[RMDB]
An RNA of 177 nucleotides, treated with 2A3 and DMS and read out base by base. For 2A3 the reverse transcriptase was SuperScript II with manganese. The reactions ran in a buffer of 150 mM KOAc, 10 mM MgCl2 and 150 mM bicine (pH 8.5), at 24 C. Source: RMDB library OK1LIB, as collected in RNAgym. The 2A3 profile rests on 616 reads. For DMS, 1,175 sequencing reads were counted.

RNA sequence: GGGAACGACUCGAGUAGAGUCGAAAAUAAACCAUAAAUUGAAGGCGACCGUUGAUAACUGCCGAUUCAGGAGUACCAUCUUCAGACCCGACUGCAAACUCCACCAACAGCGGGUUAUCUCAGCUAGAUCGCCUAAUAGCUUCGGCUAUUAGGCGAUAAAAGAAACAACAACAACAAC
Reactivity to 2A3 in 0.01 (KOAc 150mM, MgCl2 10mM, bicine 150mM(pH8.5), 24C), signal-to-noise 2, nucleotides 027 to 126: u130a010a070a000c050c000a070u180a140a160a200u250u140g120a040a020g000g000c010g050a030c030c090g170u020u050g000a110u040a260a070c020u040g050c010c020g040a010u190u070c040a010g000g000a000g060u000a070c040c000a010u130c040u020u180c000a000g040a150c030c000c010g130a240c010u020g000c040a040a040a040c030u100c030c020a010c000c010a070a080c000a020g010c000g000g000g000u010u000a050u000c000u000c000a070g060c000u000a010g020
Reactivity to DMS in 0.01 (KOAc 150mM, MgCl2 10mM, bicine 150mM(pH8.5), 24C), signal-to-noise 1, nucleotides 027 to 126: u000a030a110a220c000c060a220u000a190a050a180u030u000g000a000a110g000g000c030g000a060c100c070g000u060u000g000a200u000a080a110c040u010g060c010c020g000a070u000u050c200a060g000g000a000g040u000a120c090c040a080u020c020u000u000c050a020g000a050c200c000c000g000a110c040u020g000c100a030a000a160c040u020c050c020a000c050c040a040a160c030a070g000c060g020g020g080u040u010a040u040c010u000c020a100g000c080u040a020g000